[RMDB]
RNA sequence: GGGAACGACUCGAGUAGAGUCGAAAAAGGCACUUCGCAAUGUGUGCUCAAACAUUGCUUAUUCAAACACGCUUCACAAUGUGCGACAAAGAAACAUUGUUAUAAGAGCUAACGUUUUAACAUUGGCAAAACCGAGUUAGCUUCGGCUAACUCGGAAGCAUAAGUCUAUGUUCGCAUAGACUUAUGCAAAAGAAACAACAACAACAAC
Reactivity to DMS in 0.01 (KOAc 150mM, MgCl2 10mM, bicine 150mM(pH8.5), 24C), signal-to-noise 3, nucleotides 027 to 156: a120g000g040c050a060c060u010u000c070g030c060a100a020u030g030u020g030u000g000c010u000c120a230a110a020c060a040u000u010g020c020u040u010a070u010u000c030a130a210a110c090a040c060g030c080u000u020c140a090c090a050a030u000g020u010g000c060g040a300c120a060a090a090g030a120a070a030c020a050u000u000g020u000u010a100u000a050a090g000a170g020c020u000a080a050c030g010u000u010u000u010a060a150c050a050u010u000g020g010c040a060a040a060a210c000c000g020a020g010u000u000a020g010c000u000u000c220g080g050c010u010a000a030c010u000c000g010g020a000a040
Reactivity to 2A3 in 0.01 (KOAc 150mM, MgCl2 10mM, bicine 150mM(pH8.5), 24C), signal-to-noise 9, nucleotides 027 to 156: a000g140g000c010a000c010u020u010c020g000c010a000a000u010g010u000g010u020g020c130u110c210a030a030a000c000a000u000u000g000c010u060u160a230u170u170c100a030a060a030c070a010c060g000c000u010u010c020a010c000a010a000u000g000u000g010c020g060a090c150a090a130a050g070a020a030a000c000a000u000u010g020u040u030a150u040a090a090g040a010g020c020u020a030a050c040g020u020u040u080u150a060a050c040a050u050u110g050g000c020a050a080a020a010c000c000g000a000g000u000u000a000g000c000u010u020c060g050g000c000u000a000a000c000u000c010g000g000a000a000
An RNA of 207 nucleotides, treated with DMS and 2A3 and read out base by base. For DMS, 3,973 sequencing reads were counted. The reactions ran in a buffer of 150 mM KOAc, 10 mM MgCl2 and 150 mM bicine (pH 8.5), at 24 C. Values cover nucleotides 27 to 156.